[RMDB]
RNA sequence: GGGAACGACUCGAGUAGAGUCGAAAACAAAAUAUCAGUCGGGAGAAAUUUGAAACGCACGCAAGCCGCUAAAUCAAAACGGGGGCAGGGGAUCGCAAUUGGACCACCGACAUCGAUCGAUUUGGCAGCCGCGCUAAUUAUUCGUAAUUAGCGCGGCAAAAGAAACAACAACAACAAC
Reactivity to 2A3 in 0.01 (KOAc 150mM, MgCl2 10mM, bicine 150mM(pH8.5), 24C), signal-to-noise 1, nucleotides 027 to 126: c000a000a010a120a000u220a120u210c130a110g060u090c000g000g080g020a120g130a130a160a070u200u180u000g110a190a090a090c010g130c000a000c010g000c000a000a120g000c010c120g200c130u080a170a170a000u090c000a030a020a020a020c000g040g000g000g000g000c000a010g000g000g060g000a050u050c040g000c070a060a070u060u130g060g070a010c000c000a010c000c000g010a000c060a300u090c000g070a040u000c000g160a250u000u080u080g000g060c040a020
This 177-nucleotide RNA was probed chemically with 2A3. The RNA was probed in 150 mM KOAc, 10 mM MgCl2 and 150 mM bicine (pH 8.5) at 24 C.